RNA sequence: GGGAACGACUCGAGUAGAGUCGAAAACAGUGGGCUUGGCCAGAAGCUACCCACAAGGCUUUGGGCACCAUCUGACCACAGUAGGGGCAACAGGGUAAACAUGGGGCCCCCACAAGGCCUGGCCAGCGGUAUUGGUGUUUUUCGAAACACCAAUACCAAAAGAAACAACAACAACAAC
Reactivity to DMS in 0.01 (KOAc 150mM, MgCl2 10mM, bicine 150mM(pH8.5), 24C), signal-to-noise 3, nucleotides 027 to 126: c150a150g040u000g010g000g000c260u000u010g030g020c000c010a120g000a070a110g020c080u000a110c050c000c030a050c090a080a120g010g020c080u010u030u000g000g000g020c050a060c080c040a030u000c070u010g020a110c040c030a060c180a090g010u000a090g010g000g010g010c010a050a020c020a030g000g010g010u000a080a090a190c080a010u010g020g010g010g000c000c020c030c070c030a020c040a110a070g000g020c020c030u000g000g000c010c030a110g010c220
Reactivity to 2A3 in 0.01 (KOAc 150mM, MgCl2 10mM, bicine 150mM(pH8.5), 24C), signal-to-noise 3, nucleotides 027 to 126: c040a030g040u090g020g040g020c100u120u110g030g010c010c010a020g030a040a000g000c040u060a060c000c000c010a040c020a010a040g060g020c000u090u120u080g030g020g000c040a030c030c030a060u050c040u090g100a170c020c010a050c010a080g080u120a030g020g000g000g030c010a040a040c020a070g090g000g100u210a220a160a000c020a070u040g000g060g010g000c000c010c000c030c020a060c000a010a040g030g000c010c010u010g000g030c000c000a020g050c040